[RMDB]
Record summary: Structure probing data (DMS and 2A3) for a 177-nucleotide construct. For DMS, 2,315 sequencing reads were counted. The reactions ran in a buffer of 150 mM KOAc, 10 mM MgCl2 and 150 mM bicine (pH 8.5), at 24 C. The 2A3 profile rests on 1,971 reads. DMS adducts were read by reverse transcription with MarathonRT. It was measured as part of the RMDB library OK2TRN.
RNA sequence: GGGAACGACUCGAGUAGAGUCGAAAACGCCGGGCUGUGGCCUACGGAAUGCCGGGGGUAUCGGUGGACGGCAACGACGUCGAAGCGGUCCGUGACUGUGUGGCCAACGCGGUGGUUCGGGCUCGCGCGUGCAUGGUACUUUCGAGUACCAUGCACGAAAAGAAACAACAACAACAAC
Reactivity to DMS in 0.01 (KOAc 150mM, MgCl2 10mM, bicine 150mM(pH8.5), 24C), signal-to-noise 2, nucleotides 027 to 126: c050g010c030c020g000g040g020c030u000g000u010g020g030c000c010u000a120c040g030g010a170a070u010g040c010c030g000g000g000g010g010u010a070u000c030g000g010u000g000g010a070c020g010g010c110a100a090c040g020a120c050g000u000c040g010a100a300g000c040g000g000u010c000c030g030u000g000a100c010u000g030u000g010u000g030g030c030c080a080a090c010g010c010g000g000u000g000g010u010u000c050g010g010g000c030u000c040g000c090g000
Reactivity to 2A3 in 0.01 (KOAc 150mM, MgCl2 10mM, bicine 150mM(pH8.5), 24C), signal-to-noise 1, nucleotides 027 to 126: c020g000c020c020g000g120g000c100u180g010u100g160g010c010c020u030a030c010g050g060a190a100u130g070c030c000g000g000g000g000g000u060a100u190c030g020g020u030g080g060a040c000g060g000c010a000a040c020g140a030c070g050u060c030g050a100a020g030c010g030g030u000c000c020g000u030g050a060c030u010g030u030g050u120g120g050c030c010a010a030c010g030c000g020g020u050g020g000u070u050c020g060g000g040c010u030c060g030c020g000